An RNA of 207 nucleotides, treated with 2A3 and read out base by base.
Conditions: 150 mM KOAc, 10 mM MgCl2 and 150 mM bicine (pH 8.5), 24 C.
2A3 adducts were read by reverse transcription with SuperScript II with manganese.
The 2A3 profile rests on 983 reads.
RNA sequence: GGGAACGACUCGAGUAGAGUCGAAAAGGGGUCUCCUAACGUGAGGUUCCCUGUGGAGCUUGGAUUUAUACAGCUGAAGCCUCCACGGCUGUAUUGUCAGCUCCACCUGGAACCUCUAGGAGACGGAGGCACCCAAAGGAGCUGUUCGCAGCUCCAAUCCUUACUCCAACUUCGGUUGGAGUAAGGAAAAAGAAACAACAACAACAAC
Reactivity to 2A3 in 0.01 (KOAc 150mM, MgCl2 10mM, bicine 150mM(pH8.5), 24C), signal-to-noise 2, nucleotides 027 to 156: g020g000g000g010u020c000u000c000c030u030a150a030c070g160u080g000a000g010g000u000u000c000c000c010u000g000u000g000g010a000g000c070u140u180g220g000a100u270u300u040a010u120a000c000a000g000c010u000g050a220a050g130c000c040u040c040c020a050c000g000g020c000u020g000u000a000u010u010g010u020c010a000g010c000u020c010c000a010c000c000u010g010g010a000a030c000c000u000c000u000a020g000g040a100g020a030c030g000g000a010g000g000c050a300c130c000c030a000a120a080g020g000a000g000c020u040g020u120u080c200g000c270a000g000c000u010c000c000a010a030